[RMDB]
An RNA of 177 nucleotides, treated with 2A3 and DMS and read out base by base. Values cover nucleotides 27 to 126. It was measured as part of the RMDB library OK1LIB. For DMS the reverse transcriptase was MarathonRT.

RNA sequence: GGGAACGACUCGAGUAGAGUCGAAAACAGCUACGACAUGAUAUCGAAGCAGUCCGUGGAGAACGUCGUCUUGGAGGCGGACGCGGUCGGGAUGCUGCGGCCGGCACCCGCGAAGGAGGCUUCAAAAGCACCUGGAGACGUUCGCGUUUCCAGGUGCAAAAGAAACAACAACAACAAC
Reactivity to 2A3 in 0.01 (KOAc 150mM, MgCl2 10mM, bicine 150mM(pH8.5), 24C), signal-to-noise 5, nucleotides 027 to 126: c010a000g030c040u100a020c050g070a010c030a100u220g090a100u130a030u280c060g030a060a010g010c010a010g100u000c000c030g040u060g030g070a120g010a090a030c020g050u040c000g020u010c080u060u170g080g020a040g030g080c020g010g000a020c030g000c010g040g000u040c000g000g050g000a060u070g010c030u030g010c020g020g010c010c000g020g000c010a020c010c000c000g020c020g010a020a010g040g030a030g040g000c000u000u000c000a000a010a000a040
Reactivity to DMS in 0.01 (KOAc 150mM, MgCl2 10mM, bicine 150mM(pH8.5), 24C), signal-to-noise 3, nucleotides 027 to 126: c060a120g010c020u000a030c040g010a020c090a070u030g000a110u060a100u030c050g000a100a070g000c060a070g010u030c000c010g000u030g030g010a130g000a060a080c060g010u030c040g010u020c050u010u020g000g020a160g020g000c020g000g020a030c020g030c030g030g000u020c040g030g020g000a070u020g010c010u000g020c060g000g010c040c000g000g000c050a040c030c000c110g000c080g000a080a080g000g010a140g000g000c020u000u030c060a060a050a090a090